Structure probing data (2A3 and DMS) for a 177-nucleotide construct.
Values are in units of 0.01, from 0 to 300, in steps of 10.

RNA sequence: GGGAACGACUCGAGUAGAGUCGAAAAAUCGAAGUCUUAGUGACUGUCGAUGGUGUAAAUUUUAGAACAGUCGUUCUAAAUAAUAAGAACACUUAUAGAUCACAGCUUGGAUGCGUUUUCUUUAAUGCCAUAUUCAUAGCUUCGGCUAUGAAUAUGGAAAAGAAACAACAACAACAAC
Reactivity to 2A3 in 0.01 (KOAc 150mM, MgCl2 10mM, bicine 150mM(pH8.5), 24C), signal-to-noise 2, nucleotides 027 to 126: a000u040c000g030a020a000g090u030c000u140u250a100g010u100g090a010c030u040g130u120c040g050a050u060g000g000u000g000u000a140a170a140u020u010u010u000a030g010a030a000c030a160g300u230c080g000u090u000c000u010a040a000a000u060a000a020u100a080a060g120a140a000c000a020c020u090u030a060u070a170g100a060u060c010a020c010a070g010c010u040u040g100g050a060u040g000c040g020u040u000u110u000c020u080u060u060a130a030u110g060
Reactivity to DMS in 0.01 (KOAc 150mM, MgCl2 10mM, bicine 150mM(pH8.5), 24C), signal-to-noise 2, nucleotides 027 to 126: a020u000c010g000a100a030g020u000c020u000u000a160g010u000g000a020c020u010g000u010c150g010a040u010g010g040u000g000u000a040a110a130u000u000u000u000a000g010a010a030c010a240g000u010c230g000u000u000c000u000a000a010a010u000a090a090u020a090a120g010a170a050c020a020c020u000u010a110u000a160g010a080u000c020a020c060a080g010c030u000u010g000g020a030u000g010c090g000u020u000u000u010c000u000u010u010a110a100u020g020
The reactions ran in a buffer of 150 mM KOAc, 10 mM MgCl2 and 150 mM bicine (pH 8.5), at 24 C. 2A3 adducts were read by reverse transcription with SuperScript II with manganese. For 2A3, 920 sequencing reads were counted. For DMS, 1,613 sequencing reads were counted.